[RMDB]
RNA sequence: GGGAACGACUCGAGUAGAGUCGAAAACAAGAGCACAUUCUUUAGAUCGAUAUGCGGGAAAGCUUUUGGGCUUAAAUUUGAUAUUGUUACUCCUCGAAAGAUGCUUCUUCAAGAGUUUCAUGAAUUGUUAAAUAUUGGGCGUGAUAACUAUGAAAGAGCACAAAAAGUUAUUCGUAACUUUUUGUGCAAAAGAAACAACAACAACAAC
Reactivity to DMS in 0.01 (KOAc 150mM, MgCl2 10mM, bicine 150mM(pH8.5), 24C), signal-to-noise 2, nucleotides 027 to 156: c060a090a130g000a120g020c010a080c030a100u000u000c010u000u010u010a150g040a060u020c050g000a120u000a040u000g030c070g010g010g030a070a090a070g010c020u010u000u020u010g010g020g000c020u000u010a030a050a120u000u000u010g000a140u000a080u000u000g010u000u000a060c060u000c050c030u000c120g020a070a090a100g020a110u000g010c060u000u000c030u000u000c050a050a110g000a130g000u000u000u000c000a040u000g020a060a110u000u000g010u010u000a030a090a080u000a110u010u000g020g000g040c060g010u000g000a090u000a030a050c090u000a070u000g020a050a110a090g000a250
Reactivity to 2A3 in 0.01 (KOAc 150mM, MgCl2 10mM, bicine 150mM(pH8.5), 24C), signal-to-noise 4, nucleotides 027 to 156: c020a010a030g020a010g060c040a020c000a110u080u040c050u090u150u170a130g010a070u050c030g030a040u050a050u270g060c040g010g010g020a030a020a030g010c000u060u090u100u090g040g000g000c000u080u090a030a060a100u190u100u140g040a060u040a070u150u020g040u030u020a050c010u030c000c030u030c090g050a050a040a040g030a020u080g070c050u060u070c000u060u030c040a040a050g030a020g080u020u020u090c070a070u070g090a090a090u110u050g030u040u140a060a090a040u150a130u100u100g030g030g000c010g000u010g010a020u050a120a030c040u070a030u100g030a030a050a080g170a030